[RMDB]
This 177-nucleotide RNA was probed chemically with DMS and 2A3. For 2A3 the reverse transcriptase was SuperScript II with manganese.

RNA sequence: GGGAACGACUCGAGUAGAGUCGAAAAGCAGAUGUCCAUUACGCGAAUGCCUGUGCUUUUCGACGUUUAGUUUAGUCUGCAAGAUAGAAUUGAUGUCUCGAAGACAGGUACAUCAGCUUUUAGAGUUAAUUUCCGUCUAGUUCGCUAGACGGAAAUUAAAAGAAACAACAACAACAAC
Reactivity to DMS in 0.01 (KOAc 150mM, MgCl2 10mM, bicine 150mM(pH8.5), 24C), signal-to-noise 2, nucleotides 027 to 126: g020c000a020g020a040u000g000u000c060c060a110u010u000a230c230g000c070g010a060a090u000g020c050c030u010g010u000g000c010u000u000u000u010c100g000a030c030g020u000u010u000a000g030u000u000u000a300g000u000c010u000g060c130a150a040g020a010u000a300g010a050a030u000u010g000a010u000g010u000c020u000c100g000a040a050g000a070c050a020g000g010u000a090c040a010u010c020a030g000c010u010u000u000u000a020g000a190g000u000u000
Reactivity to 2A3 in 0.01 (KOAc 150mM, MgCl2 10mM, bicine 150mM(pH8.5), 24C), signal-to-noise 1, nucleotides 027 to 126: g040c050a030g020a070u040g050u000c020c010a020u120u200a110c140g020c000g150a090a030u100g000c000c000u040g040u260g160c000u030u020u030u050c000g000a020c000g010u000u020u060a010g000u000u000u000a060g010u000c050u050g140c140a150a020g030a040u130a030g020a010a010u040u030g000a010u020g000u000c000u000c050g030a000a000g020a010c000a000g000g010u000a010c000a010u040c030a020g010c000u080u030u040u110a180g030a020g020u000u010
Values cover nucleotides 27 to 126. The data come from the RNA Mapping Database (RMDB), library RFMREP.